This 177-nucleotide RNA was probed chemically with 2A3 and DMS. 2A3 adducts were read by reverse transcription with SuperScript II with manganese. The data come from the RNA Mapping Database (RMDB), library TTRDES.
RNA sequence: GGGAACGACUCGAGUAGAGUCGAAAAGAUAUGGAAACCGAGGACAACAGCAUAGGACUCGGAAACGAGUCUAUGACAUGUCCGAGGUUUCCUAAGUCAAACAAGGAGGACUUCGGUCCUCCUUGAACUAUCCAGCUUUGUUCGCAAAGCUGGAUAGAAAAGAAACAACAACAACAAC
Reactivity to 2A3 in 0.01 (KOAc 150mM, MgCl2 10mM, bicine 150mM(pH8.5), 24C), signal-to-noise 2, nucleotides 027 to 126: g030a000u050a000u080g010g000a020a000a000c010c000g020a080g020g010a020c080a300a020c110a300g040c000a020u020a020g170g240a170c000u000c000g010g000a000a010a010c000g000a000g000u000c000u020a010u010g030a030c090a230u300g000u000c010c010g010a000g000g000u020u000u000c000c000u000a000a000g000u000c000a010a050a210c010a030a010g020g010a010g000g020a030c000u090u150c300g070g040u000c000c000u000c010c000u000u000g000a000a000
Reactivity to DMS in 0.01 (KOAc 150mM, MgCl2 10mM, bicine 150mM(pH8.5), 24C), signal-to-noise 3, nucleotides 027 to 126: g000a020u000a100u020g010g000a020a010a020c000c000g000a300g000g000a000c000a120a120c240a120g000c000a020u000a010g010g030a050c010u000c000g000g010a010a030a040c000g010a030g000u010c010u000a000u000g000a010c080a300u000g000u000c010c000g000a300g000g010u000u000u010c000c000u010a010a060g000u010c010a090a220a170c010a000a000g000g020a000g030g010a020c000u000u020c220g040g010u000c000c000u000c000c000u000u000g000a050a200